[RMDB]
Chemical mapping of a 207-nucleotide RNA with 2A3 and DMS.
Reactivities are rounded to 0.1 and cut off at 0 and 3.
The DMS profile rests on 3,482 reads.
For 2A3, 2,496 sequencing reads were counted.
It was measured as part of the RMDB library OK3TST.
2A3 adducts were read by reverse transcription with SuperScript II with manganese.
RNA sequence: GGGAACGACUCGAGUAGAGUCGAAAACAUAUGAGCCCGAUGACUGGGCGUACAACAGACACGUCAUGGGAGCUUUAUUUGCUCACAUAGAGCAACUCUCAGUGGGUCAUGACACAGACCCAAAUGCGGUACGAGCCAUUCGCGUAGCUGGCCAGGAUCGUGAUAUCGUAUUCGUACGAUAUCACGAAAAAGAAACAACAACAACAAC
Reactivity to 2A3 in 0.01 (KOAc 150mM, MgCl2 10mM, bicine 150mM(pH8.5), 24C), signal-to-noise 4, nucleotides 027 to 156: c050a010u270a070u190g050a040g000c000c000c000g070a200u140g060a030c110u060g010g010g030c020g000u050a020c030a100a000c010a020g110a030c020a010c140g090u090c040a080u050g000g000g020a010g000c040u170u240u190a110u170u140u160g000c000u030c000a030c060a110u230a040g000a010g010c010a010a060c000u000c000u020c030a010g040u060g000g000g000u000c020a040u120g070a020c030a000c020a140g020a020c000c000c000a010a100a020u100g000c020g060g010u030a030c060g020a050g030c000c020a050u060u060c030g000c010g090u080a060g010c050u040g020g050c000c050a040g050g060a050
Reactivity to DMS in 0.01 (KOAc 150mM, MgCl2 10mM, bicine 150mM(pH8.5), 24C), signal-to-noise 2, nucleotides 027 to 156: c040a160u030a130u000g000a080g000c000c010c010g040a070u000g010a120c050u000g010g060g020c020g010u000a030c050a060a050c050a080g000a110c030a120c110g020u010c070a090u010g010g000g020a040g000c080u000u000u010a090u020u000u010g010c000u000c000a120c190a120u000a160g020a050g010c010a040a160c020u000c010u000c030a030g020u020g040g030g030u010c000a110u000g000a130c150a100c070a140g000a100c000c010c010a020a040a030u000g000c080g000g030u000a070c030g000a110g000c000c030a090u010u010c040g020c060g050u000a100g020c050u010g000g030c000c050a140g000g000a160